An RNA of 177 nucleotides, treated with DMS and 2A3 and read out base by base. Reactivities are given for positions 27 through 126. The 2A3 profile rests on 5,595 reads. The RNA was probed in 150 mM KOAc, 10 mM MgCl2 and 150 mM bicine (pH 8.5) at 24 C. DMS adducts were read by reverse transcription with MarathonRT.
RNA sequence: GGGAACGACUCGAGUAGAGUCGAAAACAUAAACGCUUCGGCGUUUAUGAAAUAAAAUCAGCGGUAAGCUCGCGUAUAAUAUUACCGCUGAACGCGAGCUUAAAACGGGACAGUUCGCUGUCCCGAACACACUUACCAAGUUCGCUUGGUAAGUGUGAAAAGAAACAACAACAACAAC
Reactivity to DMS in 0.01 (KOAc 150mM, MgCl2 10mM, bicine 150mM(pH8.5), 24C), signal-to-noise 3, nucleotides 027 to 126: c010a010u000a000a010a000c000g020c000u010u020c190g040g010c000g010u000u000u000a000u000g000a070a100a050u010a060a050a080a060u010c090a090g000c040g010g010u000a050a010g010c030u000c030g000c020g020u000a090u000a090a090u000a060u000u000a100c050c050g010c060u010g020a030a020c010g000c010g000a010g010c020u000u000a030a030a110a120c040g010g030g010a030c020a000g010u000u020c200g010c010u000g010u000c000c000c000g000a030a070
Reactivity to 2A3 in 0.01 (KOAc 150mM, MgCl2 10mM, bicine 150mM(pH8.5), 24C), signal-to-noise 4, nucleotides 027 to 126: c000a000u000a000a000a000c010g010c000u040u070c230g150g000c000g000u000u010u000a000u010g000a000a000a010u170a010a080a000a110u110c020a020g050c010g070g070u060a040a000g010c010u010c010g020c000g020u030a090u050a240a120u110a110u130u110a030c030c030g030c050u010g010a000a000c000g000c000g000a010g000c000u020u070a020a060a020a030c010g010g000g000a010c000a010g000u040u060c120g060c120u000g000u000c010c000c000g000a000a000